[RMDB]
RNA sequence: GGGAACGACUCGAGUAGAGUCGAAAAACCGGAGGCCGACAAUCCAGGGAACCGGAUGUCAUCACGUUGUUGCAGUACCAGAUGGCAUCUUAAAUCCGAUCUGCAAAUAAGCAGGUAGAAAGCUGAUAAAAUCACACACACUUCGGUGUGUGUGAAACAUAUCUUCACAGUUCGCUGUGAAGAUAUGAAAAGAAACAACAACAACAAC
Reactivity to 2A3 in 0.01 (KOAc 150mM, MgCl2 10mM, bicine 150mM(pH8.5), 24C), signal-to-noise 3, nucleotides 027 to 156: a000c000c010g020g020a030g010g040c080c020g010a060c100a060a070u070c040c050a020g000g010g030a010a060c030c040g010g010a010u010g000u010c000a010u010c000a000c200g050u060u060g020u040u050g020c080a070g070u130a130c080c010a030g000a000u000g000g000c010a000u010c020u000u060a030a060a000u050c000c020g030a040u020c010u010g010c010a030a060a290u170a290a040g010c010a000g000g010u020a050g100a040a100a000g040c090u090g030a030u160a060a140a010a040u010c000a000c000a000c000a000c000a010c010u060u100c200g110g000u010g010u010g010u010g000u000g000a000a000a000
Reactivity to DMS in 0.01 (KOAc 150mM, MgCl2 10mM, bicine 150mM(pH8.5), 24C), signal-to-noise 2, nucleotides 027 to 156: a090c030c010g000g000a110g000g040c030c000g000a150c060a040a100u000c050c050a100g010g020g010a080a150c070c090g020g010a020u000g020u000c000a030u000c020a240c170g000u000u000g020u000u000g000c010a100g020u010a080c030c070a110g000a030u000g010g010c000a020u000c010u000u000a050a110a140u000c020c030g000a060u000c010u000g000c010a080a080a170u000a120a250g010c000a020g020g010u000a030g020a040a030a120g010c030u010g010a090u000a020a060a070a140u000c010a000c000a010c000a010c000a000c000u000u030c300g080g020u000g010u000g000u010g010u000g000a020a010a060
The data come from the RNA Mapping Database (RMDB), library M2RFPK. This 207-nucleotide RNA was probed chemically with 2A3 and DMS. The 2A3 profile rests on 2,025 reads. For DMS the reverse transcriptase was MarathonRT. The RNA was probed in 150 mM KOAc, 10 mM MgCl2 and 150 mM bicine (pH 8.5) at 24 C.